[RMDB]
RNA sequence: GGGAACGACUCGAGUAGAGUCGAAAAGAUAUGGAGUUCGCAGAUACGGUGUCCACUAUGAAGUAUAGAUGAUCGUCGGAAACGACGAUCAUCUAUAUGGAGUGGCACCGAGUAGAACUCCUAAGUCGGAUGAAAAGUUGUUCGCAACUUUUCAUCCAAAAGAAACAACAACAACAAC
Reactivity to DMS in 0.01 (KOAc 150mM, MgCl2 10mM, bicine 150mM(pH8.5), 24C), signal-to-noise 1, nucleotides 027 to 126: g000a080u000a300u030g000g000a030g000u010u010c000g030c250a190g030a160u010a150c030g030g020u000g010u020c010c020a010c010u000a250u000g040a150a300g020u000a000u010a000g080a000u000g010a020u000c000g000u000c000g000g010a060a200a270c010g000a030c000g000a000u000c000a000u010c000u010a000u000a010u010g010g000a050g030u000g000g020c010a020c000c000g000a030g000u000a060g030a020a010c050u000c000c000u000a000a130g030u000c140

Source: RMDB library TTRINS, as collected in RNAgym. An RNA of 177 nucleotides, treated with DMS and read out base by base. The reactions ran in a buffer of 150 mM KOAc, 10 mM MgCl2 and 150 mM bicine (pH 8.5), at 24 C. The DMS profile rests on 791 reads. DMS adducts were read by reverse transcription with MarathonRT.